[RMDB]
RNA sequence: GGGAACGACUCGAGUAGAGUCGAAAAUUGGGUGCAAGUCACUUUGGAAUCGUCUCAAUCUUUAAUCCUGAGGCCGAUUCCUCUGCAGUCGAAGGGGUUUGCAGGUGGCGGGUUUGGGAUCCUGUUUCUAAUUGAGCAGGAGGUUGACAUAUUGGAAAACUGAACAACAGUUCGCUGUUGUUCAGUUAAAAGAAACAACAACAACAAC
Reactivity to 2A3 in 0.01 (KOAc 150mM, MgCl2 10mM, bicine 150mM(pH8.5), 24C), signal-to-noise 1, nucleotides 027 to 156: u060u060g000g000g000u020g000c060a100a090g050u070c010a000c030u000u060u120g000g000a000a000u000c000g040u010c000u000c000a080a090u110c120u250u300u200a040a030u090c020c120u010g000a040g010g000c050c020g000a000u000u010c000c010u030c000u040g000c010a090g100u190c010g020a160a040g020g010g000g060u060u090u050g050c010a000g040g040u050g000g210c070g020g000g000u090u170u000g020g020g000a010u040c040c000u020g010u030u300u050c020u020a110a190u170u180g000a020g000c000a000g000g000a010g000g000u000u010g010a060c020a110u210a210u080u140g000g020a060a060
This 207-nucleotide RNA was probed chemically with 2A3. For 2A3, 345 sequencing reads were counted.